The data come from the RNA Mapping Database (RMDB), library OK3TST. This 207-nucleotide RNA was probed chemically with 2A3 and DMS. For DMS the reverse transcriptase was MarathonRT. The RNA was probed in 150 mM KOAc, 10 mM MgCl2 and 150 mM bicine (pH 8.5) at 24 C. For 2A3 the reverse transcriptase was SuperScript II with manganese.
RNA sequence: GGGAACGACUCGAGUAGAGUCGAAAACAGAUCAGUACGCUGAUCUGACUCAACGAGAGUUGAGAAACUCUAGAUUCGUUACGCAGAGAAUCUAGAGAAAACAGUAGAAUCGAUGAAGCCCGGCAUCGAUUCUACUGAAAACCGGGCAAGCGUGACAUGAGGGAUAAAAUUUCGAUUUUAUCCCUCAAAAAGAAACAACAACAACAAC
Reactivity to 2A3 in 0.01 (KOAc 150mM, MgCl2 10mM, bicine 150mM(pH8.5), 24C), signal-to-noise 1, nucleotides 027 to 156: c010a000g020a000u020c000a000g010u040a020c180g020c070u000g020a000u010c000u000g010a050c000u000c010a020a000c000g020a020g000a000g140u000u000g020a000g010a070a020a010c000u000c020u000a000g000a010u000u000c020g030u150u090a040c060g000c060a020g050a000g000a140a000u000c000u010a000g000a000g020a010a120a020a010c000a000g000u020a000g000a010a000u000c010g000a000u020g030a070a030g140c030c030c010g020g050c020a020u000c000g020a000u000u000c000u000a010c000u010g000a000a000a000a020c040c010g000g010g020c010a050a040g030c010g020u020g030a010c030a090
Reactivity to DMS in 0.01 (KOAc 150mM, MgCl2 10mM, bicine 150mM(pH8.5), 24C), signal-to-noise 2, nucleotides 027 to 156: c020a060g020a020u020c010a050g010u010a080c290g060c020u010g020a000u000c010u010g010a160c020u000c030a010a000c010g010a300g010a290g010u000u000g020a060g000a180a080a180c000u000c000u000a000g010a040u000u000c000g000u000u010a110c200g000c060a300g000a240g000a020a010u010c010u010a030g010a010g000a020a030a080a170c010a020g050u000a010g010a050a000u000c000g020a020u000g000a040a120g050c060c030c030g040g000c010a010u000c010g000a010u000u010c030u000a020c000u020g010a020a000a060a110c070c030g020g010g020c050a110a110g010c010g020u000g020a120c130a180